[RMDB]
RNA sequence: GGGAACGACUCGAGUAGAGUCGAAAAGAUUCGUCAGCCGCAUGCCCAGGUGGCCGCGAUCUUCAAGGCUACGGCGCGGAUAGGUCCGCGCUGAUCGUUUUCCUCCAACAACGCUAUGGCGUCUUUCAAAAUCGGCAUCGGUUCGCCGAUGCCGAAACGACAAGCAAUGGUUCGCCAUUGCUUGUCGAAAAGAAACAACAACAACAAC
Reactivity to 2A3 in 0.01 (KOAc 150mM, MgCl2 10mM, bicine 150mM(pH8.5), 24C), signal-to-noise 1, nucleotides 027 to 156: g030a050u150u110c020g070u060c080a050g010c010c000g000c030a050u150g050c010c070c010a040g050g050u030g020g000c000c020g050c020g010a010u000c000u030u050c060a040a060g030g020c000u020a000c030g000g000c020g010c070g000g000a070u150a170g220g170u030c000c000g010c020g060c000u020g000a030u000c020g030u010u000u010u000c000c000u180c070c040a070a070c010a030a020c080g000c000u130a160u160g110g010c000g030u020c070u050u300u210c120a110a110a020a120u010c000g000g000c000a000u000c000g000g100u080u070c190g000c000c000g010a010u000g000c020c000g000a030a000a000
Chemical mapping of a 207-nucleotide RNA with 2A3. It was measured as part of the RMDB library M2RFPK. The RNA was probed in 150 mM KOAc, 10 mM MgCl2 and 150 mM bicine (pH 8.5) at 24 C.